An RNA of 207 nucleotides, treated with 2A3 and read out base by base. For 2A3, 988 sequencing reads were counted. Reactivities are given for positions 27 through 156.
RNA sequence: GGGAACGACUCGAGUAGAGUCGAAAAGAACACGUCUGGGGACGACGCUAAACUCGCCCUGGUCGGGAUGGGUUUAACGACCCCUCGGGUUUCCUAGUUCCUAAAACUAGGUGGUGGAGUCAUAUAAAAAACUUCUACACGUUCGCGUGUAGAAGAAGUUCUAAAGUGCGUUCGCGCACUUUAGAACAAAAGAAACAACAACAACAAC
Reactivity to 2A3 in 0.01 (KOAc 150mM, MgCl2 10mM, bicine 150mM(pH8.5), 24C), signal-to-noise 2, nucleotides 027 to 156: g020a030a010c060a000c070g060u070c130u090g000g010g000g020a030c120g050a050c010g050c030u020a030a010a000c010u000c020g010c010c000c000u150g090g190u200c120g080g020g000a100u100g030g030g000u000u010u000a030a010c000g060a060c000c000c000c000u020c010g020g000g000u000u000u020c000c000u010a020g020u030u020c020c010u060a030a030a010a030c000u000a010g000g000u020g010g040u040g050g080a110g030u090c060a030u080a000u300a280a120a070a040a010a010c010u000u000c000u000a000c000a000c010g020u030u020c120g020c000g090u030g000u000a000g000a000a000g000a010a020
Background: The RNA was probed in 150 mM KOAc, 10 mM MgCl2 and 150 mM bicine (pH 8.5) at 24 C.